[RMDB]
RNA sequence: GGGAACGACUCGAGUAGAGUCGAAAAGAUAUGGACGCGAUAAGCAUAUCGUACGGUCAACAGCACGGUCGGAAACGACCGUGACAUGACUUGAAAUAUGCUUUUGACGCGUCCUAAGUCAAACAGUCACGAUUAGGUUCGCCUAAUCGUGACUGAACACGUGUAUACAGUUCGCUGUAUACACGUGAAAAGAAACAACAACAACAAC
Reactivity to 2A3 in 0.01 (KOAc 150mM, MgCl2 10mM, bicine 150mM(pH8.5), 24C), signal-to-noise 7, nucleotides 027 to 156: g030a010u060a020u160g010g000a010c010g010c010g040a060u020a070a010g000c010a000u000a000u040c100g070u120a040c040g010g010u010c020a060a050c020a200g060c000a000c000g010g000u010c010g020g040a070a060a040c010g000a000c000c000g000u010g020a030c000a060u040g000a000c010u030u070g010a030a010a000u000a000u000g010c010u020u020u050u120g120a070c020g000c000g000u010c000c000u000a000a000g020u010c020a030a060a080c010a000g000u000c000a000c000g010a000u000u010a010g030g070u050u060c220g100c080c000u000a000a000u000c000g000u000g000a000c000u000g000a000a000
Reactivity to DMS in 0.01 (KOAc 150mM, MgCl2 10mM, bicine 150mM(pH8.5), 24C), signal-to-noise 3, nucleotides 027 to 156: g020a170u000a200u010g020g020a030c010g050c000g040a210u000a020a000g000c010a010u000a010u010c020g000u050a300c300g030g000u000c000a060a080c060a160g030c010a000c000g010g040u000c000g010g010a210a160a270c010g020a020c000c010g020u000g000a010c050a300u000g000a030c010u000u010g010a100a040a020u000a020u000g000c020u000u000u000u010g020a240c090g030c000g000u010c010c000u000a000a040g010u000c060a090a120a240c010a020g000u000c010a020c000g010a040u000u010a020g010g000u010u010c300g020c010c000u010a000a000u000c010g030u000g000a000c000u000g010a010a140
This 207-nucleotide RNA was probed chemically with 2A3 and DMS. For DMS the reverse transcriptase was MarathonRT. The 2A3 profile rests on 13,924 reads. The DMS profile rests on 6,400 reads.